[RMDB]
Chemical mapping of a 207-nucleotide RNA with 2A3 and DMS. 2A3 adducts were read by reverse transcription with SuperScript II with manganese. For DMS, 1,462 sequencing reads were counted. For DMS the reverse transcriptase was MarathonRT. The reactions ran in a buffer of 150 mM KOAc, 10 mM MgCl2 and 150 mM bicine (pH 8.5), at 24 C. Reactivities are given for positions 27 through 156.
RNA sequence: GGGAACGACUCGAGUAGAGUCGAAAAGCGUAAUGCACCCAAUAAUCCGCUUACACAUCAACCACUUGAAGGCAAGCAACAAGAUGGUGGUCUGCGUCUAGGUGAGAUGGAGAAAGAUUGCAUCUUAGUGAACGGUAAAGCGCGUGGUUUGGCACAACCUACAGGAACGUUUCGACGUUCCUGUAGGAAAAGAAACAACAACAACAAC
Reactivity to 2A3 in 0.01 (KOAc 150mM, MgCl2 10mM, bicine 150mM(pH8.5), 24C), signal-to-noise 2, nucleotides 027 to 156: g000c020g050u080a070a070u200g050c010a060c000c000c040a020a050u200a030a010u050c040c040g030c090u080u100a000c070a020c020a090u140c050a060a040c010c020a080c080u030u060g060a120a000g060g000c070a030a100g040c020a030a130c040a030a100g120a120u030g000g060u010g020g020u000c020u070g020c030g020u020c040u060a060g000g080u030g040a090g000a000u060g030g020a060g040a070a110a000g030a020u040u100g000c010a000u010c020u000u040a020g020u050g080a060a020c050g040g000u130a090a020a030g050c070g000c010g040u040g010g020u090u100u010g030g000c050a010c000a100a060
Reactivity to DMS in 0.01 (KOAc 150mM, MgCl2 10mM, bicine 150mM(pH8.5), 24C), signal-to-noise 1, nucleotides 027 to 156: g010c040g070u010a120a030u000g010c050a090c060c040c030a140a120u000a110a130u040c040c090g000c130u000u000a100c070a130c060a220u000c010a110a040c040c040a020c010u000u000g040a030a090g050g000c020a120a100g000c050a150a180c070a000a070g010a100u010g090g050u000g000g040u000c080u020g020c150g030u000c030u000a070g000g010u000g000a090g030a030u000g000g010a060g000a050a050a090g000a180u010u000g010c000a300u020c040u000u000a060g000u000g010a050a080c020g000g020u000a030a060a080g000c010g030c040g040u010g000g020u000u000u020g020g000c000a060c100a030a290